[RMDB]
RNA sequence: GGGAACGACUCGAGUAGAGUCGAAAAGAUAUGGAGUUAUCGGGAGUAUUUUACUCGGAAACGAGUAUCAUACGAAGAACGAGUAACUCCUAAGUCAAAUCCCUACAGUGUUCGCACUGUAGGGAAACCAUAUAAGAGUCUUCGGACUCUUAUAUGGAAAAGAAACAACAACAACAAC
Reactivity to 2A3 in 0.01 (KOAc 150mM, MgCl2 10mM, bicine 150mM(pH8.5), 24C), signal-to-noise 4, nucleotides 027 to 126: g000a010u010a010u070g000g010a010g010u010u010a020u030c020g000g010g020a030g010u020a000u000u030u010u010a010c000u000c000g010g010a010a010a000c000g000a000g000u010a000u020c000a010u000a030c040g170a300a060g000a010a000c010g000a050g130u030a010a010c000u000c000c000u000a010a010g000u000c030a070a040a200u030c020c000c000u000a000c000a000g000u010g110u130u230c270g050c100a010c000u010g000u000a000g000g000g000a020a030a010
Reactivity to DMS in 0.01 (KOAc 150mM, MgCl2 10mM, bicine 150mM(pH8.5), 24C), signal-to-noise 4, nucleotides 027 to 126: g010a010u000a050u010g000g000a020g010u000u000a010u000c010g010g010g010a020g020u000a000u000u000u000u000a000c000u000c010g020g010a010a010a040c000g010a020g010u000a010u000c020a020u000a010c000g000a110a180g000a150a230c000g010a050g000u000a010a010c000u000c000c000u000a000a050g000u000c000a120a140a160u000c000c000c000u000a000c000a000g010u000g000u000u010c220g020c000a010c000u000g000u010a000g000g010g000a000a000a040
Record summary
An RNA of 177 nucleotides, treated with 2A3 and DMS and read out base by base. 2A3 adducts were read by reverse transcription with SuperScript II with manganese.